[RMDB]
RNA sequence: GGGAACGACUCGAGUAGAGUCGAAAAGUUUCCGGGUUCGCCCGGAAACAAACUGUGUGUGAAAAAGAGAGAGAGAAAAACACACACACAAACUCUCUCUCAAAAGAGAAGUCUUCGGACUUCUCAACGUAAUCACUAGGUUCGCCUAGUGAUUACGAAAAGAAACAACAACAACAAC
Reactivity to DMS in 0.01 (KOAc 150mM, MgCl2 10mM, bicine 150mM(pH8.5), 24C), signal-to-noise 1, nucleotides 027 to 126: g000u000u000u000c000c000g000g000g030u000u010c250g030c020c000c010g010g000a010a010a000c000a010a060a080c080u000g010u010g040u010g000u000g000a100a110a020a130a110g010a020g000a030g000a020g010a060g030a020a040a080a050a120c030a010c030a030c000a050c130a060c170a080a100a060c000u000c010u000c000u000c020u000c010a060a030a070a070g020a030g010a020a030g000u000c000u000u030c220g030g000a000c010u000u010c000u000c000a060a090
Reactivity to 2A3 in 0.01 (KOAc 150mM, MgCl2 10mM, bicine 150mM(pH8.5), 24C), signal-to-noise 2, nucleotides 027 to 126: g000u000u000u000c000c000g020g000g000u020u030c180g060c080c020c030g000g040a000a000a010c010a010a000a000c020u030g010u020g000u010g000u000g160a160a060a030a150a000g000a010g000a000g000a000g000a000g090a080a170a000a110a010c060a000c000a000c000a010c010a010c020a060a200a220c030u000c010u000c000u000c000u000c000a020a080a020a000g010a000g000a000a000g010u000c020u070u130c300g110g000a010c000u010u000c000u000c010a000a000